[RMDB]
RNA sequence: GGGAACGACUCGAGUAGAGUCGAAAAGCGAGACUCCUGAGGGAGCAGUGCCAGUCGAAGACCGAGGCUGAGACGGCACCCUAGGAAAGCGAAGCCAUUCAAUACGAAGUAUUGUAUAAAUAGAGAAAAAGUUUGGUAGUUUCGACUACCAAACUUUAAAAGAAACAACAACAACAAC
Reactivity to 2A3 in 0.01 (KOAc 150mM, MgCl2 10mM, bicine 150mM(pH8.5), 24C), signal-to-noise 2, nucleotides 027 to 126: g010c050g000a060g050a190c080u020c000c000u110g060a090g050g000g000a030g020c010a000g010u080g230c030c000a010g000u010c010g110a090a090g070a140c090c090g020a040g080g000c000u040g000a000g000a160c010g030g000c000a010c000c010c000u010a000g000g000a210a000a000g000c000g000a100a000g040c010c000a050u070u080c000a000a030u000a030c020g070a300a030g050u060a000u000u000g090u090a040u080a020a080a000u230a030g160a000g110a060a170
Reactivity to DMS in 0.01 (KOAc 150mM, MgCl2 10mM, bicine 150mM(pH8.5), 24C), signal-to-noise 3, nucleotides 027 to 126: g000c020g000a130g030a070c110u000c000c000u000g000a020g020g000g000a120g010c050a030g000u000g030c010c000a030g050u010c000g010a150a170g010a110c140c220g010a200g020g030c000u010g000a170g000a040c030g000g000c000a030c040c000c000u020a030g000g000a020a060a150g000c000g040a150a100g020c030c080a110u000u030c020a020a000u000a000c030g000a170a170g030u020a040u010u000g000u000a070u030a080a080a050u010a190g010a150g000a100a090
The record gives the reactivity of an RNA of 177 nucleotides to 2A3 and DMS. The RNA was probed in 150 mM KOAc, 10 mM MgCl2 and 150 mM bicine (pH 8.5) at 24 C. The 2A3 profile rests on 761 reads. The data come from the RNA Mapping Database (RMDB), libraries RFM100 and RFMREP. High 2A3 reactivity points to a flexible backbone, as in loops and unpaired stretches. In probing experiments dimethyl sulfate is read out at A N1 and C N3, which are open when not base-paired. For DMS the reverse transcriptase was MarathonRT.